[RMDB]
RNA sequence: GGGAACGACUCGAGUAGAGUCGAAAAGUCGGCCGCCCGCGAUGUGGUCAAUCGCGACGUUUUCUUUGCGAUGACGGCCGACGUGUUGGGCGCCGCGCUGCCCGGCUCGGCCGCGGAGGUGAUUACCCAAUGUUAAUGGUUUCGACCAUUAACAUUGAAAAGAAACAACAACAACAAC
Reactivity to 2A3 in 0.01 (KOAc 150mM, MgCl2 10mM, bicine 150mM(pH8.5), 24C), signal-to-noise 8, nucleotides 027 to 126: g030u020c010g030g020c100c060g030c030c030c000g010c020g030a060u080g080u110g110g040u040c000a030a050u030c020g010c030g030a040c030g030u080u060u160u130c030u060u080u100g000c010g050a050u070g040a080c080g000g010c000c000g010a000c000g000u020g030u020u240g020g010g000c030g010c030c000g010c030g000c040u060g010c000c000c000g020g000c050u080c050g090g000c020c020g050c090g040g020a040g020g050u070g040a130u050u180a090c000c010
Reactivity to DMS in 0.01 (KOAc 150mM, MgCl2 10mM, bicine 150mM(pH8.5), 24C), signal-to-noise 9, nucleotides 027 to 126: g010u000c010g010g010c030c030g020c030c010c010g020c020g010a070u010g010u000g020g020u000c090a140a030u000c020g010c020g010a300c170g000u010u000u010u010c060u000u000u000g010c020g010a080u000g010a080c120g000g000c000c000g010a040c040g010u000g010u010u010g020g010g010c020g010c020c040g010c080g000c040u000g010c050c010c020g000g000c040u000c100g010g010c020c030g020c070g000g010a160g010g010u000g000a130u000u000a170c030c030
Record summary
Chemical mapping of a 177-nucleotide RNA with 2A3 and DMS. The reactions ran in a buffer of 150 mM KOAc, 10 mM MgCl2 and 150 mM bicine (pH 8.5), at 24 C. Reactivities are given for positions 27 through 126. For 2A3 the reverse transcriptase was SuperScript II with manganese.